[RMDB]
Source: RMDB library OK2TRN, as collected in RNAgym. Chemical mapping of a 177-nucleotide RNA with DMS. The reactions ran in a buffer of 150 mM KOAc, 10 mM MgCl2 and 150 mM bicine (pH 8.5), at 24 C. For DMS, 723 sequencing reads were counted. DMS adducts were read by reverse transcription with MarathonRT.
RNA sequence: GGGAACGACUCGAGUAGAGUCGAAAAAAUUCGAAAACUGGGCAGGCACCGGCCAUCUUAGGAUGGAAUGGACGCUCACCAAGGCCGGGAUUGAGCGCGUCGAAGUCGGGUUUCUGGGGAAGUGCGCAAAGACAGCUACUUUCGAGUAGCUGUCUUUAAAAGAAACAACAACAACAAC
Reactivity to DMS in 0.01 (KOAc 150mM, MgCl2 10mM, bicine 150mM(pH8.5), 24C), signal-to-noise 1, nucleotides 027 to 126: a150a050u020u010c020g000a120a130a080a070c140u010g000g020g010c090a060g040g000c040a080c020c060g000g010c000c010a010u000c020u000u010a170g020g020a060u000g030g000a120a060u000g010g010a150c150g000c060u020c020a080c070c010a060a130g000g030c090c000g030g000g030a100u000u000g000a060g020c060g030c070g010u000c060g020a070a080g000u010c040g020g000g000u000u000u010c060u010g000g000g000g060a110a080g010u010g010c050g000c080